The data come from the RNA Mapping Database (RMDB), library OK2TST. Structure probing data (DMS) for a 177-nucleotide construct. Values are in units of 0.01, from 0 to 300, in steps of 10. For DMS, 640 sequencing reads were counted. The RNA was probed in 150 mM KOAc, 10 mM MgCl2 and 150 mM bicine (pH 8.5) at 24 C.
RNA sequence: GGGAACGACUCGAGUAGAGUCGAAAACAGCGGAGGUACACCGAUACCGCUGCAUCCAGGCUGGGUACGCCGCCAAGGAAGAGGAGCUGAGGAAGAAGAUCGACGAGCUGGACCGGAUCGGACUAACUACCGAUUUGGUCUUCGGACCAAAUCGGUAAAAAGAAACAACAACAACAAC
Reactivity to DMS in 0.01 (KOAc 150mM, MgCl2 10mM, bicine 150mM(pH8.5), 24C), signal-to-noise 1, nucleotides 027 to 126: c160a070g060c020g000g070a080g000g000u030a040c100a160c080c040g040a140u010a120c090c030g000c020u000g010c050a160u000c070c040a150g000g000c010u000g000g010g000u010a120c110g030c050c110g030c030c010a080a070g010g000a070a100g010a100g020g000a100g040c070u000g010a020g030g000a070a050g000a050a210g000a100u010c030g000a120c050g000a100g010c170u000g010g000a030c000c010g030g010a040u000c030g010g000a170c030u010a050a070c140